[RMDB]
RNA sequence: GGGAACGACUCGAGUAGAGUCGAAAAGACCCUUUAUGGAACUGUCAUUCAACCCCAAAAAUCUAGUGCAAAUAUUGUCUCAAUUACUUAGGCUAAAAGAAAUAAGUAUUAAAGCGGGACAAGGCAUAACAGCAGCUACGCUUCGGCGUAGCUGCAAACAUAGUAUCACGUUCGCGUGAUACUAUGUAAAAGAAACAACAACAACAAC
Reactivity to DMS in 0.01 (KOAc 150mM, MgCl2 10mM, bicine 150mM(pH8.5), 24C), signal-to-noise 2, nucleotides 027 to 156: g000a230c010c000c020u000u000u000a130u020g010g020a090a160c040u000g020u010c060a190u010u010c050a100a160c030c000c020c030a030a140a080a120a110u000c090u020a100g050u000g050c080a110a130a210u000a060u010u010g020u000c010u000c010a150a140u000u000a050c010u010u010a050g010g050c040u020a090a050a090a060g020a150a130a100u000a020a040g000u000a030u000u000a050a090a130g000c120g000g000g040a040c000a030a050g000g030c030a090u000a160a050c060a120g000c020a020g010c000u000a010c000g040c020u000u010c300g030g000c020g020u000a010g010c010u000g000c010a000a010
Reactivity to 2A3 in 0.01 (KOAc 150mM, MgCl2 10mM, bicine 150mM(pH8.5), 24C), signal-to-noise 3, nucleotides 027 to 156: g060a000c000c000c000u020u140u080a150u110g010g000a070a060c080u110g020u060c070a080u110u140c090a130a160c020c010c000c050a050a130a080a030a050u090c120u110a060g020u010g030c040a100a110a130u130a130u140u010g010u000c010u000c000a040a070u050u010a000c010u020u010a010g050g020c020u130a200a160a010a030g060a030a110a040u050a030a000g020u010a030u080u180a190a070a020g150c110g020g000g000a000c000a000a000g040g000c010a020u050a120a090c040a090g000c000a000g000c000u000a000c000g000c010u050u080c210g030g000c000g000u000a000g010c000u010g000c000a000a000
The record gives the reactivity of an RNA of 207 nucleotides to DMS and 2A3.
The DMS profile rests on 2,519 reads.
The RNA was probed in 150 mM KOAc, 10 mM MgCl2 and 150 mM bicine (pH 8.5) at 24 C.